[RMDB]
RNA sequence: GGGAACGACUCGAGUAGAGUCGAAAAGAUAUGGAUCGAGUAGGGAGUUGCCACUCGGAAACGAGUGGGCAACAUCGAUCUACCGAUCCUAAGUCAAAAGCAGCGGAACGUUCGCGUUCCGCUGCAACCAUGAAUCUGUGUUCGCACAGAUUCAUGGAAAAGAAACAACAACAACAAC
Reactivity to 2A3 in 0.01 (KOAc 150mM, MgCl2 10mM, bicine 150mM(pH8.5), 24C), signal-to-noise 1, nucleotides 027 to 126: g000a010u000a010u040g000g000a000u020c000g010a070g060u000a010g010g030g010a040g020u000u010g030c010c000a000c010u000c010g000g000a010a020a000c010g000a000g000u010g000g050g040c010a000a000c000a010u300c010g000a000u020c000u000a010c000c000g010a000u000c000c000u000a020a000g000u000c000a050a000a060a230g000c000a000g000c000g000g050a010a020c010g030u140u200c300g020c030g190u030u020c040c020g000c000u000g000c000a000a000
Reactivity to DMS in 0.01 (KOAc 150mM, MgCl2 10mM, bicine 150mM(pH8.5), 24C), signal-to-noise 1, nucleotides 027 to 126: g030a010u000a000u000g000g000a010u000c000g010a110g020u000a010g020g000g010a000g070u000u000g000c020c000a000c000u000c010g010g000a000a010a010c000g020a010g000u000g000g020g000c000a010a000c000a290u000c300g000a000u010c010u000a010c000c010g000a010u000c000c000u010a000a050g000u000c000a110a070a100a160g020c000a000g040c000g010g000a020a010c000g000u000u010c300g030c000g020u020u000c000c000g010c000u000g010c000a010a020